Description:
The data come from the RNA Mapping Database (RMDB), libraries RFM100 and RFMREP. The record gives the reactivity of an RNA of 177 nucleotides to DMS. For DMS the reverse transcriptase was MarathonRT.
RNA sequence: GGGAACGACUCGAGUAGAGUCGAAAAGAAAGAAUGAACAGUUAAAUUAUAACAUGUCCAUAUUAUGGGUUAGUUGUGGACACAUACUAACGCAUAAUAUGGACAUGUUAUAAUUUAACUGUUCCAACAAACCCAAGAUGUUCGCAUCUUGGGUUUGAAAAGAAACAACAACAACAAC
Reactivity to DMS in 0.01 (KOAc 150mM, MgCl2 10mM, bicine 150mM(pH8.5), 24C), signal-to-noise 3, nucleotides 027 to 126: g010a140a080a080g010a130a110u030g010a020a010c000a010g000u000u000a000a000a000u010u000a000u000a000a000c000a000u010g000u000c000c000a020u010a010u000u000a000u000g000g010g010u010u010a000g000u000u020g040u000g000g020a160c300a090c010a010u010a010c000u000a000a000c010g000c010a000u000a000a000u000a000u000g000g000a000c000a000u000g000u000u000a000u000a000a000u000u000u000a000a000c000u000g000u000u000c010c180a060a150